Chemical mapping of a 207-nucleotide RNA with 2A3. It was measured as part of the RMDB library M2RFPK. Reactivities are given for positions 27 through 156. Conditions: 150 mM KOAc, 10 mM MgCl2 and 150 mM bicine (pH 8.5), 24 C.
RNA sequence: GGGAACGACUCGAGUAGAGUCGAAAAACGGAUGGUACGCCAUCCGACCAUUGGGUAGAAGCGUUCAAUCAGCACCGUGACGGUGCAGAUGGGAUAUUGCCCAUGAUACGCACCAUACGUGGUGCGAAAAAGCCAUCGGUGUUCGCACCGAUGGCAAGUGGUGUUAUCACUUCGGUGAUAACACCACAAAAGAAACAACAACAACAAC
Reactivity to 2A3 in 0.01 (KOAc 150mM, MgCl2 10mM, bicine 150mM(pH8.5), 24C), signal-to-noise 2, nucleotides 027 to 156: a000c010g010g000a000u000g000g020u040a030c250g030c020c000a000u000c000c000g000a000c000c000a100u100u130g040g020g010u060a080g050a220a010g060c030g070u070u060c030a060a040u000c030a020g000c010a010c020c010g090u190g220a160c300g000g000u000g000c020a000g000a000u000g000g030g000a000u000a060u110u050g000c000c000c000a000u040g080a020u030a030c010g000c000a000c000c010a010u030a090c250g110u090g000g010u000g010c010g010a040a010a010a020a020g000c000c000a000u000c000g000g000u000g050u000u090c090g060c140a010c000c010g000a000u000g000g000c000a000a000